[RMDB]
RNA sequence: GGGAACGACUCGAGUAGAGUCGAAAAGAACGCCAAGAGGCGAGACCGAGACCGACAAUCACGCUAGCUCGGAAAAGUGGAAUAGCGUCAGGAGUCCACUAUCGGAAAAGCCGAAAGAACGGCAGAAAUCGUAGGUAUGGUUCGCCAUACCUACGAUAAAAGAAACAACAACAACAAC
Reactivity to 2A3 in 0.01 (KOAc 150mM, MgCl2 10mM, bicine 150mM(pH8.5), 24C), signal-to-noise 3, nucleotides 027 to 126: g020a030a000c050g020c020c010a070a110g100a130g080g030c000g010a020g040a020c000c000g010a000g000a000c000c000g010a000c010a010a080u060c040a010c040g000c000u050a040g060c030u010c030g160g000a080a040a030a000g110u120g060g030a100a130u010a040g000c020g010u010c040a050g000g110a030g030u000c000c000a020c080u010a050u020c000g000g020a000a120a010a040g020c000c000g020a040a040a000g140a060a000c010g010g000c030a000g070a040a150
Reactivity to DMS in 0.01 (KOAc 150mM, MgCl2 10mM, bicine 150mM(pH8.5), 24C), signal-to-noise 4, nucleotides 027 to 126: g000a110a160c060g010c010c000a100a120g000a240g000g030c000g010a130g010a300c000c000g010a030g000a160c280c280g000a000c050a030a210u020c220a040c040g000c030u010a070g000c050u020c040g010g000a060a030a070a140g030u010g010g000a060a070u000a050g010c000g000u030c190a060g000g000a300g000u000c000c000a030c060u010a050u010c050g000g000a030a130a090a180g000c000c000g010a030a070a120g010a170a120c070g000g000c020a080g000a030a070
Chemical mapping of a 177-nucleotide RNA with 2A3 and DMS. DMS adducts were read by reverse transcription with MarathonRT. It was measured as part of the RMDB library OK1LIB.